[RMDB]
RNA sequence: GGGAACGACUCGAGUAGAGUCGAAAACAAUUGAGCGUCGCACACACACAGACUAAGUCUGACACAGACAGAGCCUAAACCGCUCUGUCAGUGUGCGAGAUAUCGUUCUUAAUGUGAGCAGAGGAAAGUCAAAAGUAAGGUUCGCCUUACUUUUGACAAAAGAAACAACAACAACAAC
Reactivity to DMS in 0.01 (KOAc 150mM, MgCl2 10mM, bicine 150mM(pH8.5), 24C), signal-to-noise 5, nucleotides 027 to 126: c060a080a140u010u000g010a040g010c060g020u000c000g000c010a010c020a010c010a110c260a160c040a010g000a010c020u010a120a160g010u000c010u000g010a140c210a080c240a100g010a020c000a010g000a020g000c000c010u000a040a070a120c300c300g000c010u000c000u000g000u000c000a030g010u000g000u000g000c000g010a020g000a070u010a100u000c040g010u000u000c000u000u000a060a090u010g020u010g000a060g020c080a070g010a060g010g010a080a050a100
Reactivity to 2A3 in 0.01 (KOAc 150mM, MgCl2 10mM, bicine 150mM(pH8.5), 24C), signal-to-noise 5, nucleotides 027 to 126: c010a030a120u080u100g000a010g030c020g040u010c000g020c010a000c000a010c000a000c000a000c000a020g020a020c030u220a300a060g020u000c000u020g100a070c020a010c020a200g010a000c000a000g000a000g000c000c000u030a060a050a030c020c010g000c000u010c000u010g000u000c010a010g010u000g000u000g010c010g000a000g000a000u100a010u080c010g020u040u000c000u040u150a180a150u130g050u050g090a040g040c080a030g070a030g060g130a140a060a020